Background: An RNA of 177 nucleotides, treated with DMS and 2A3 and read out base by base. The reactions ran in a buffer of 150 mM KOAc, 10 mM MgCl2 and 150 mM bicine (pH 8.5), at 24 C. For 2A3 the reverse transcriptase was SuperScript II with manganese.
RNA sequence: GGGAACGACUCGAGUAGAGUCGAAAAACUCAGGAACUAGCCUCUGUAGGGACUUGAUUUUUCUGUUACUUUCUGGCCGUUUCACCACCCCCCUUCCUCCCUCCAAGUGGCAUUGUAAAACUCACAGAUCUAAAUUGUUAUUCGUAACAAUUUAGAUAAAAGAAACAACAACAACAAC
Reactivity to DMS in 0.01 (KOAc 150mM, MgCl2 10mM, bicine 150mM(pH8.5), 24C), signal-to-noise 9, nucleotides 027 to 126: a050c100u000c010a060g010g010a090a100c060u010a100g000c040c050u010c060u000g020u020a110g010g000g000a100c050u000u010g000a070u010u010u010u000u010c020u010g010u010u010a050c070u000u010u000c040u010g010g010c020c020g010u000u000u010c040a090c040c040a230c020c010c010c010c010c010u000u000c020c020u000c020c010c010u000c030c040a060a100g010u010g000g000c080a080u000u010g010u010a050a050a060a090c070u010c040a060c140a120g000
Reactivity to 2A3 in 0.01 (KOAc 150mM, MgCl2 10mM, bicine 150mM(pH8.5), 24C), signal-to-noise 9, nucleotides 027 to 126: a000c050u040c020a020g050g030a040a030c030u040a050g030c010c010u090c070u120g080u150a090g020g030g060a050c010u040u070g050a080u120u050u020u070u040c040u040g090u090u060a100c030u040u090u060c020u010g030g000c010c000g020u020u050u070c050a060c020c000a040c000c010c000c000c000c000u010u020c000c000u000c000c000c000u000c020c010a080a040g030u030g030g000c020a020u020u060g050u070a040a060a070a070c020u040c030a080c030a050g120